[RMDB]
An RNA of 177 nucleotides, treated with DMS and read out base by base. Values cover nucleotides 27 to 126. The reactions ran in a buffer of 150 mM KOAc, 10 mM MgCl2 and 150 mM bicine (pH 8.5), at 24 C.
RNA sequence: GGGAACGACUCGAGUAGAGUCGAAAAGAUAUGGAGGGGCUCGCACCAAGUUCUUUGAUCUCUCGUAACAUCUUAUCGGAAACGAUAAGUGGAGAGGGAGAACGACGUGCGAGCCCCUCCUAAGUCAUCUUAUAAAGUAGUUCGCUACUUUAUAAGAAAAAGAAACAACAACAACAAC
Reactivity to DMS in 0.01 (KOAc 150mM, MgCl2 10mM, bicine 150mM(pH8.5), 24C), signal-to-noise 3, nucleotides 027 to 126: g000a050u000a300u000g000g010a030g040g010g000g030c000u020c000g030c000a000c000c040a070a300g010u000u010c000u000u000u010g010a110u020c010u010c000u010c020g020u000a050a100c210a030u010c000u000u000a010u000c000g000g000a170a120a260c010g010a000u000a000a010g040u000g010g000a030g000a020g000g030g000a000g000a010a020c020g000a300c300g000u000g000c000g000a000g010c000c000c010c000u000c000c000u000a010a090g000u000c030a110